[RMDB]
RNA sequence: GGGAACGACUCGAGUAGAGUCGAAAAGAUAUGGAGCAUAGUGCAAGGCGCUGUUCGGAAACGAACAGGGCAAGUCGCUGAUGACCACUGAUGCUCCUAAGUCAAAACGGUGAGUUCGCUCACCGAAGUAGAAUUGAGUCUUCGGACUCAAUUCUACAAAAGAAACAACAACAACAAC
Reactivity to 2A3 in 0.01 (KOAc 150mM, MgCl2 10mM, bicine 150mM(pH8.5), 24C), signal-to-noise 3, nucleotides 027 to 126: g000a000u040a010u030g010g000a010g000c000a010u010a030g000u020g050c090a170a270g080g000c180g010c160u000g000u000u000c000g010g000a020a000a000c000g010a010a000c020a010g020g100g000c060a060a040g300u160c070g050c230u180g110a300u180g030a060c020c000a000c020u100g090a050u020g000c000u020c020c000u000a000a000g000u000c030a000a050a080a150c020g020g020u010g000a010g010u070u240c300g050c150u010c000a000c010c000g010a050a030
Reactivity to DMS in 0.01 (KOAc 150mM, MgCl2 10mM, bicine 150mM(pH8.5), 24C), signal-to-noise 2, nucleotides 027 to 126: g000a020u010a060u010g020g000a030g020c010a000u000a010g000u000g020c120a140a090g020g030c000g000c000u000g020u000u010c000g010g000a000a020a060c000g000a020a000c000a010g020g020g040c140a050a120g040u000c110g000c240u020g000a050u020g040a130c300c010a000c000u010g020a050u000g000c000u000c000c000u000a010a070g000u000c010a110a090a150a270c010g050g000u000g000a000g020u000u010c210g000c040u000c000a040c010c000g010a020a060

This 177-nucleotide RNA was probed chemically with 2A3 and DMS. Reactivities are given for positions 27 through 126. For DMS the reverse transcriptase was MarathonRT. Reactivities are rounded to 0.1 and cut off at 0 and 3. For 2A3, 4,362 sequencing reads were counted.